[RMDB]
RNA sequence: GGGAACGACUCGAGUAGAGUCGAAAAGAAGAGCUUAAUCAGACUAGCUGAAUGGAAGCCUGUUACCGGGCUGAUGUUUAUGCGAAAUGCUAAUACGGUGACUACGCUCGUAGAUAUUCAAGUGCCGAUAUUUCUGGACGUGGGUUCGACUCCCACCCCUCAAUCAUACGUUCGCGUAUGAUUGAGGAAAAGAAACAACAACAACAAC
Reactivity to 2A3 in 0.01 (KOAc 150mM, MgCl2 10mM, bicine 150mM(pH8.5), 24C), signal-to-noise 5, nucleotides 027 to 156: g060a060a000g040a010g000c030u120u200a050a000u150c020a030g050a100c080u070a010g020c010u010g010a020a020u040g020g020a000a010g010c010c000u040g080u200u090a100c100c040g000g000g000c000u010g010a020u050g000u020u040u040a160u230g030c040g050a050a060a100u150g010c060u080a030a030u070a080c040g010g010u020g030a030c010u040a030c060g040c050u040c050g030u030a010g050a120u100a080u140u180c100a130a030g040u040g130c020c010g040a040u040a100u110u110u020c030u070g060g020a070c040g020u010g010g000g000u040u060c030g010a000c030u000c010c000c010a010c000c010
Reactivity to DMS in 0.01 (KOAc 150mM, MgCl2 10mM, bicine 150mM(pH8.5), 24C), signal-to-noise 2, nucleotides 027 to 156: g020a100a070g000a090g000c030u000u010a070a120u020c050a050g010a090c040u000a180g020c040u000g020a080a090u000g000g000a200a110g040c000c020u000g000u000u010a120c210c040g000g020g030c000u000g000a260u020g010u000u000u010a040u020g090c020g020a150a090a150u000g030c040u000a090a060u000a090c050g020g040u000g040a090c010u000a040c040g020c060u000c030g000u000a060g010a090u000a050u000u000c060a060a110g020u010g010c020c080g000a060u010a030u000u000u000c020u000g020g000a060c060g000u000g020g010g020u010u000c120g010a300c140u000c000c000c020a040c070c040